[RMDB]
RNA sequence: GGGAACGACUCGAGUAGAGUCGAAAAGAUAUGGAUUCAUGAAAGCAACAGCUAACUGUGGUCGGAAACGACCAUUUAGACAUGCUUAAAUGAAUCCUAAGUCAAACGGCUGCGUUCGCGCAGCCGACCAAAAGUGAAUGUUCGCAUUCACUUUUGGAAAAGAAACAACAACAACAAC
Reactivity to 2A3 in 0.01 (KOAc 150mM, MgCl2 10mM, bicine 150mM(pH8.5), 24C), signal-to-noise 3, nucleotides 027 to 126: g020a000u040a000u070g010g000a010u010u010c000a010u020g060a110a020a030g010c130a100a130c080a240g020c020u020a010a020c090u070g010u010g040g020u010c000g020g000a030a020a020c010g000a000c000c000a000u000u000u000a010g000a000c050a170u300g000c000u030u010a030a170a000u010g000a010a000u000c000c000u000a020a000g010u010c010a110a090a110c050g010g000c000u010g040c010g080u070u100c300g000c000g020c150a010g000c010c010g020a000
Reactivity to DMS in 0.01 (KOAc 150mM, MgCl2 10mM, bicine 150mM(pH8.5), 24C), signal-to-noise 4, nucleotides 027 to 126: g000a060u000a160u010g000g000a010u010u000c000a010u000g000a260a050a030g030c000a100a080c240a090g000c000u000a010a020c300u000g000u000g000g010u000c000g020g000a030a030a130c020g000a020c010c000a000u000u000u000a000g000a010c030a300u000g010c000u010u010a080a230a000u010g000a010a010u000c000c000u000a010a070g000u000c010a120a150a270c010g000g010c020u010g020c000g040u010u010c230g010c000g010c000a000g020c020c000g010a050

Chemical mapping of a 177-nucleotide RNA with 2A3 and DMS. Conditions: 150 mM KOAc, 10 mM MgCl2 and 150 mM bicine (pH 8.5), 24 C. The data come from the RNA Mapping Database (RMDB), library TTRDES.